[RMDB]
RNA sequence: GGGAACGACUCGAGUAGAGUCGAAAAAGAUAUGCAGUUUACUUAUUUGGGUUUGUAAGAGUGCGCGGACCGUUUGGAUCACCAACAAUCACAGUGUCAACCAUAUUCAAGAACAAUCCGUGUUCUAAUACUCAUAUGCAUUCGUGCAUAUGAGUAUAAAAGAAACAACAACAACAAC
Reactivity to 2A3 in 0.01 (KOAc 150mM, MgCl2 10mM, bicine 150mM(pH8.5), 24C), signal-to-noise 4, nucleotides 027 to 126: a010g050a040u080a040u140g040c040a020g020u040u150u120a090c020u110u100a090u260u160u100g060g010g030u060u110u070g060u090a090a040g040a040g050u060g020c050g000c040g040g020a010c000c020g020u020u050u090g020g010a040u040c000a000c090c000a020a030c020a050a060u080c030a010c020a070g030u010g030u050c030a020a040c030c000a020u040a040u090u130c060a050a020g030a080a030c010a030a050u020c060c070g110u070g030u050u020c010u000a020
Reactivity to DMS in 0.01 (KOAc 150mM, MgCl2 10mM, bicine 150mM(pH8.5), 24C), signal-to-noise 6, nucleotides 027 to 126: a070g000a080u000a030u000g010c060a080g000u000u010u000a060c050u000u000a070u000u010u010g010g000g000u000u000u000g020u000a060a060g010a120g020u000g010c070g020c060g010g000a090c040c040g010u010u000u010g020g010a090u000c080a080c050c030a050a050c100a040a060u010c040a060c080a050g020u010g010u000c050a030a080c050c030a050u000a060u000u000c090a080a050g000a040a030c070a070a080u010c100c090g000u000g010u000u000c010u000a070